[RMDB]
RNA sequence: GGGAACGACUCGAGUAGAGUCGAAAAAUGGGAAGUUGGCCUCAGUGAGCAGAUGGUACAGGGGCUGAGCUUAAAACAAAAAUCACAAACAUUUCUUGGGGGGUAUCCUCAAGGCCGAUAACCCUCUUACUAGAGUGAAAUGGAAAACCAAAUGUGAGACUACGCUAUGAUUCGUCAUAGCGUAGUCAAAAGAAACAACAACAACAAC
Reactivity to 2A3 in 0.01 (KOAc 150mM, MgCl2 10mM, bicine 150mM(pH8.5), 24C), signal-to-noise 1, nucleotides 027 to 156: a000u060g020g000g020a000a080g000u040u030g030g020c000c000u000c070a030g020u040g060a040g000c020a020g020a100u100g000g000u030a020c020a050g030g000g000g000c000u020g050a010g020c000u050u080a000a030a100a000c050a020a050a050a080a000u190c040a070c030a090a070a060c000a100u100u170u020c000u140u100g000g000g000g020g000g030u070a000u000c000c000u060c060a000a010g010g000c000c020g020a020u020a030a050c000c010c000u010c040u020u070a170c080u030a090g070a070g150u190g000a000a000a110u080g020g060a150a000a000a000c060c000a070a050a030u080g040u020g050a030